[RMDB]
RNA sequence: GGGAACGACUCGAGUAGAGUCGAAAAGGGGUCAGCGAGAGGAAAGCGACAUGCUGAUUACUGAAGCCUCCACGGUAACAGCAACAGCGCUUUCUACCCACCUCGCUGACGGAGGCACCCAAACCUUUCGGCUGUACUUCGGUACAGCCGAAAGGAACCUUAACGAUGGGUUCGCCCAUCGUUAAGGAAAAGAAACAACAACAACAAC
Reactivity to 2A3 in 0.01 (KOAc 150mM, MgCl2 10mM, bicine 150mM(pH8.5), 24C), signal-to-noise 1, nucleotides 027 to 156: g070g000g040g030u010c000a000g000c000g000a010g000a010g000g030a020a000a000g000c030g210a300c100a150u090g000c030u050g070a300u040u010a000c000u020g020a070a020g010c000c000u010c020c000a000c000g000g000u010a000a010c000a000g000c010a030a080c060a230g030c010g000c010u020u000u000c000u000a010c050c010c000a050c000c000u010c000g010c000u000g000a010c010g000g000a000g000g000c010a020c020c000c000a100a070a100c010c000u000u010u000c000g010g010c000u000g010u060a010c020u040u090c250g070g000u000a000c000a000g000c000c000g000a010a000a000g020g000a000a000
Chemical mapping of a 207-nucleotide RNA with 2A3. The RNA was probed in 150 mM KOAc, 10 mM MgCl2 and 150 mM bicine (pH 8.5) at 24 C. Values cover nucleotides 27 to 156.